[RMDB]
RNA sequence: GGGAACGACUCGAGUAGAGUCGAAAAAUCUUUCGCAAUUGAUUUAGUUUGCAAUUAGAAUCCGCAUAAUGUCUAUGUAGCCGUGUAGGUUUUAAUCCUUGACCAAAUCCAACCCUAGGUUCAUCAACCCUAUAAGAAUAUUCGUAUUCUUAUAGGGAAAAGAAACAACAACAACAAC
Reactivity to DMS in 0.01 (KOAc 150mM, MgCl2 10mM, bicine 150mM(pH8.5), 24C), signal-to-noise 4, nucleotides 027 to 126: a080u000c030u000u000u000c100g020c070a070a100u000u010g010a050u010u010u010a090g020u010u010u000g010c050a070a070u000u010a050g010a050a070u000c050c040g000c050a060u020a110a080u010g010u010c040u010a060u010g010u000a060g010c040c110g030u000g020u010a070g010g010u000u000u010u000a040a100u000c040c030u010u000g000a070c040c030a010a060a080u010c030c060a040a110c030c010c010u010a090g020g000u000u000c050a050u010c110a080a180
Reactivity to 2A3 in 0.01 (KOAc 150mM, MgCl2 10mM, bicine 150mM(pH8.5), 24C), signal-to-noise 2, nucleotides 027 to 126: a000u040c010u040u100u090c040g000c060a070a110u040u090g030a040u110u210u200a070g100u000u040u070g010c000a020a060u040u040a050g030a080a040u040c050c030g000c050a040u100a180a080u210g040u020c030u060a100u110g130u130a050g040c060c050g020u040g040u060a070g010g050u000u040u050u110a020a050u040c000c020u020u070g040a020c030c010a060a040a060u060c010c010a010a080c020c000c020u050a050g070g010u050u030c030a030u050c010a040a110